[RMDB]
RNA sequence: GGGAACGACUCGAGUAGAGUCGAAAAUCUUUUUCCCAGUUGCCUAAAUCCAUGUAAUUGGCUGCGUGAGGAAUUUUUUUGAUCUGUUAUUUAAUUCUCGAUAUAACCGAUCUUUUCCUCUUUGCUGAUGUUUUCCCGUAUUCGUACGGGAAAACAUAAAAGAAACAACAACAACAAC
Reactivity to 2A3 in 0.01 (KOAc 150mM, MgCl2 10mM, bicine 150mM(pH8.5), 24C), signal-to-noise 1, nucleotides 027 to 126: u000c010u060u080u000u010u050c000c000c000a050g200u090u000g070c000c000u080a050a110a040u000c030c040a000u050g200u300a280a170u150u020g070g000c050u180g000c080g010u000g000a000g020g060a010a000u070u020u160u160u070u100u140g010a010u010c000u000g030u000u000a130u040u030u050a280a300u300u040c220u090c080g150a000u030a000u000a120a000c030c030g000a000u000c010u000u000u000u000c020c000u050c070u060u120u100g000c020u020g000